Chemical mapping of a 177-nucleotide RNA with 2A3. 2A3 adducts were read by reverse transcription with SuperScript II with manganese. High 2A3 reactivity points to a flexible backbone, as in loops and unpaired stretches. It was measured as part of the RMDB library OK1LIB.
[RMDB]
RNA sequence: GGGAACGACUCGAGUAGAGUCGAAAAGCCGCCAGGUAGUCGUUGCCGUCACGUACAUACUGCGCGGCAUCUUUGGUCGUGAUGUGCUCAAAGACCACUUUAAGCGCGGUCAGACGCUGGCGUAGCGCGCGACGCUCGUCUUCGGACGAGCGUCGCGAAAAGAAACAACAACAACAAC
Reactivity to 2A3 in 0.01 (KOAc 150mM, MgCl2 10mM, bicine 150mM(pH8.5), 24C), signal-to-noise 1, nucleotides 027 to 126: g050c000c000g000c000c000a050g220g030u050a050g000u000c060g080u090u020g160c040c040g050u050c050a000c030g060u080a090c050a050u300a180c050u020g010c000g000c000g060g000c000a000u000c030u080u100u080g050g000u010c050g060u090g030a150u190g250u210g010c000u050c180a010a010a000g000a050c010c050a100c040u060u090u110a140a040g010c020g000c000g020g000u010c000a000g080a100c000g040c170u040g020g000c020g000u040a030g090c030g030